[RMDB]
RNA sequence: GGGAACGACUCGAGUAGAGUCGAAAACUCGUUCACGGUUAUGUCUGUCUCUGGCAGAGCAGACAGUCAGGAGGAAGAGGUCACCAUCUUCACGAAGCCAAAGCCAAAUUCCGCCUUGUCCUGUAAAGCCUACGUGGCGUUUCGACGCCACGUAGGCAAAAGAAACAACAACAACAAC
Reactivity to 2A3 in 0.01 (KOAc 150mM, MgCl2 10mM, bicine 150mM(pH8.5), 24C), signal-to-noise 1, nucleotides 027 to 126: c000u000c000g060u170u160c020a130c180g000g000u040u190a140u180g000u000c000u000g010u120c000u000c060u060g300g000c070a010g000a000g010c000a000g000a000c000a000g000u040c070a000g000g020a090g050g050a170a130g000a030g000g090u100c000a000c020c020a020u000c000u050u060c060a070c000g020a000a040g150c000c000a030a020a130g080c000c050a000a050a190u060u000c000c000g000c000c000u000u040g000u010c000c010u000g070u170a000a060a000